RNA sequence: GGGAACGACUCGAGUAGAGUCGAAAAUCUCAGGAUUCGUCCUGAGAAAAAAAUCCUAAGUCCAAGCCGUUUGACGCAGAGCCUGAUAUCGGAAACGAUAUGAGGCGACGAAGCCGAGGCUUGGAUAUGGAAAAAAAGGCAUCUUUCGAGAUGCCAAUGGAAUAUUUGGUUUCGACCAAAUAUUCCAAAAAGAAACAACAACAACAAC
Reactivity to DMS in 0.01 (KOAc 150mM, MgCl2 10mM, bicine 150mM(pH8.5), 24C), signal-to-noise 1, nucleotides 027 to 156: u020c000u000c000a000g000g000a020u000u020c300g020u020c020c000u040g050a100g020a000a000a030a080a000a110a120u000c000c000u000a060a270g020u000c000c000a000a070g040c030c000g020u000u000u020g000a040c100g000c060a020g040a300g000c000c000u020g030a040u000a000u000c000g160g000a080a270a180c000g000a000u000a000u000g000a020g020g000c000g000a060c150g000a020a100g000c060c000g000a100g000g060c000u010u000g020g000a000u000a000u000g060g020a070a000a010a150a120a300a040g000g000c000a060u000c000u000u000u020c220g000a030g020a060u000g000c010c040a000a060